[RMDB]
RNA sequence: GGGAACGACUCGAGUAGAGUCGAAAAGGGAUGGGAUCCGAAGCCCCAUUGAGGGAUAAUACAGGCUCUCCCAUCCAACUCCUAUUCCAACACGUCCUCGUCGUACAGAGUGGUAACAUGUGUCACCGAGCAACAUUGGCUUCGGCCAAUGUUGCUCAAAAGAAACAACAACAACAAC
Reactivity to 2A3 in 0.01 (KOAc 150mM, MgCl2 10mM, bicine 150mM(pH8.5), 24C), signal-to-noise 2, nucleotides 027 to 126: g030g000g000a000u000g000g000g000a000u000c010c010g050a000a000g050c000c000c020c000a070u130u300g130a300g040g000g080a000u230a230a060u130a130c080a030g000g000c000u000c000u000c010c000c040a000u000c000c000a000a000c000u010c020c000u040a040u130u040c000c000a040a000c000a040c140g010u070c000c000u000c050g140u000c000g050u130a070c030a070g100a010g190u060g050g040u040a000a080c000a080u000g010u040g050u120c010a030c000c110